Chemical mapping of a 177-nucleotide RNA with DMS. Source: RMDB library OK2TRN, as collected in RNAgym. For DMS, 805 sequencing reads were counted. For DMS the reverse transcriptase was MarathonRT.
[RMDB]
RNA sequence: GGGAACGACUCGAGUAGAGUCGAAAAAUAAACCUAGAAAUUCAUACGUUGGCAGUGUACCACCUCGUUCACCUCCUCCGAUCGUUGUCAAGUCAGAUGGAGAAGAGCUUGAUGAUGAGGAAGAAGAAAAUGAUUACGGGUUCGCCCGUAAUCAUUUAAAAGAAACAACAACAACAAC
Reactivity to DMS in 0.01 (KOAc 150mM, MgCl2 10mM, bicine 150mM(pH8.5), 24C), signal-to-noise 1, nucleotides 027 to 126: a120u000a050a090a130c040c000u000a100g000a130a150a110u020u000c050a040u000a110c100g020u010u020g020g020c070a040g030u010g020u010a050c050c020a060c000c020u000c040g040u000u000c070a110c100c020u010c010c020u010c010c010g040a090u000c040g000u020u010g000u000c040a020a060g020u000c060a120g010a090u000g020g020a100g000a090a090g040a130g000c020u000u000g010a050u000g010a000u000g000a020g010g010a080a100g040a020a130g020a090